[RMDB]
RNA sequence: GGGAACGACUCGAGUAGAGUCGAAAAAUGCUUCACAAUGUGCGGCAAAGAAACAUUGUUUAUGCAAAGGCACUUCGCAAUGUGUGCUCAAACAUUGCUUAUUCAAACACGCUUCACAAUGUGCGACAAAACUUCACGGUCUUCGGACCGUGAAGAACCUUCUCAGCCACUUCGGUGGCUGAGAAGGAAAAGAAACAACAACAACAAC
Reactivity to 2A3 in 0.01 (KOAc 150mM, MgCl2 10mM, bicine 150mM(pH8.5), 24C), signal-to-noise 2, nucleotides 027 to 156: a000u020g000c000u060u070c010a020c010a010a160u120g000u020g050c020g130g010c100a040a090a000g130a040a120a010c040a070u040u020g020u090u050u100a070u180g050c060a070a070a070g100g000c010a000c000u020u000c080g060c140a100a110u120g000u010g020u010g000c060u100c220a050a090a010c040a080u030u020g020c000u020u050a110u070u080c000a030a100a000c050a030c130g000c020u060u070c050a060c030a060a070u070g040u010g000c030g060a060c040a000a060a040a030c000u000u000c000a000c000g010g000u000c010u060u010c090g070g000a000c000c000g000u000g000a000a000g000a000a000
Structure probing data (2A3) for a 207-nucleotide construct. For 2A3 the reverse transcriptase was SuperScript II with manganese. The RNA was probed in 150 mM KOAc, 10 mM MgCl2 and 150 mM bicine (pH 8.5) at 24 C. Values cover nucleotides 27 to 156.